[RMDB]
RNA sequence: GGGAACGACUCGAGUAGAGUCGAAAAUUGCGUUUGACCUGCGCGGAGCGAUACCGGCUGAUAAACUCCGGUGAGUACGGCGGCCCGUUGCGUUCGUCGAACAGGUCAAGUUCGGGAUCGGUUGCAACUUAUGUGUUACGUUCGCGUAACACAUAAGAAAAGAAACAACAACAACAAC
Reactivity to DMS in 0.01 (KOAc 150mM, MgCl2 10mM, bicine 150mM(pH8.5), 24C), signal-to-noise 9, nucleotides 027 to 126: u010u000g010c040g010u000u000u000g000a020c010c010u000g010c300g020c020g000g010a060g010c020g010a130u000a030c040c220g000g000c090u000g010a100u020a080a180a070c060u000c010c160g020g000u010g000a060g010u000a090c220g010g000c060g010g000c030c010c170g010u010u000g010c030g010u000u000c010g010u000c020g000a070a060c010a020g010g010u000c020a030a020g010u010u000c030g000g000g010a080u000c070g010g000u000u000g010c090a070a150
Reactivity to 2A3 in 0.01 (KOAc 150mM, MgCl2 10mM, bicine 150mM(pH8.5), 24C), signal-to-noise 5, nucleotides 027 to 126: u050u080g050c020g020u010u000u060g000a000c000c000u000g000c020g000c030g050g000a030g010c000g020a010u030a040c030c000g010g000c030u040g060a180u110a260a190a060c030u010c020c050g140g060u190g040a050g020u100a060c070g030g030c020g010g010c030c010c030g050u040u110g030c040g020u020u050c030g080u060c020g020a060a020c000a010g010g000u020c010a010a010g070u060u070c040g010g020g070a070u080c050g040g070u090u090g010c030a060a040
Chemical mapping of a 177-nucleotide RNA with DMS and 2A3. For DMS the reverse transcriptase was MarathonRT. 2A3 adducts were read by reverse transcription with SuperScript II with manganese. The 2A3 profile rests on 7,825 reads. It was measured as part of the RMDB library OK2TRN.